[RMDB]
RNA sequence: GGGAACGACUCGAGUAGAGUCGAAAACAUGACGAGUUCGCUCGUCAUGAAAGAAAGAAAGAUAGUCUGAAGCGCCAGACAAGCGCAAAAGAAAGAAAGAAAAAAGCAAACUCUUCGGAGUUUGCAACAAUUACCUAUAGUUCGCUAUAGGUAAUUGAAAAGAAACAACAACAACAAC
Reactivity to DMS in 0.01 (KOAc 150mM, MgCl2 10mM, bicine 150mM(pH8.5), 24C), signal-to-noise 4, nucleotides 027 to 126: c010a000u010g000a000c000g010a010g010u000u020c230g030c000u000c000g010u000c010a020u000g000a070a090a110g000a090a110a120g010a100a090a100g000a110u000a100g010u010c000u000g000a190a220g000c010g010c010c080a080g030a110c260a120a130g000c010g030c010a020a040a140a030g000a040a050a070g000a060a080a130g010a010a030a090a100a080a090g010c010a010a010a020c000u000c000u000u010c150g020g000a000g010u000u000u000g020c010a070a050
Reactivity to 2A3 in 0.01 (KOAc 150mM, MgCl2 10mM, bicine 150mM(pH8.5), 24C), signal-to-noise 3, nucleotides 027 to 126: c000a000u010g000a000c000g000a000g010u050u060c120g080c130u000c010g010u000c000a000u000g000a020a000a000g030a010a060a000g080a040a120a000g100a090u140a070g080u010c000u010g020a130a020g010c010g020c000c020a040g060a300c050a040a010g000c000g000c010a070a100a020a000g050a000a060a010g060a010a130a000g070a020a180a010a030a010a000g000c000a000a000a010c000u000c020u040u110c200g060g000a000g000u000u010u000g020c000a010a000